[RMDB]
RNA sequence: GGGAACGACUCGAGUAGAGUCGAAAAACCAUGAGCAUCCCAAACAAACAAUCUAAAAACAAUACUUACAAUAGCACUAUUCCUUCUUAUCCUACUAGCAGCAAGCCUAGCAUACGAAUGAACCCAAAAAGGCCUAGAAUGAGCAGAAUAUGAUAAUUAUGAUUCUAUGCUUCGGCAUAGAAUCAUAAAAAGAAACAACAACAACAAC
Reactivity to 2A3 in 0.01 (KOAc 150mM, MgCl2 10mM, bicine 150mM(pH8.5), 24C), signal-to-noise 2, nucleotides 027 to 156: a000c040c020a010u090g030a030g030c010a020u030c010c020c000a000a110a010c010a010a090a000c020a040a060u100c010u240a130a040a080a070a000c050a160a030u150a140c080u140u110a070c090a080a110u030a090g010c000a050c090u090a130u050u050c010c030u040u020c020u080u070a050u110c000c000u010a090c000u050a010g020c040a000g020c030a090a030g000c000c000u050a050g000c000a040u030a120c020g010a060a010u140g020a060a090c030c000c000a010a170a000a110a000g030g000c000c030u020a050g050a130a090u050g020a030g020c040a000g070a130a010u150a050u130g050a060u110a160a010u150
This 207-nucleotide RNA was probed chemically with 2A3.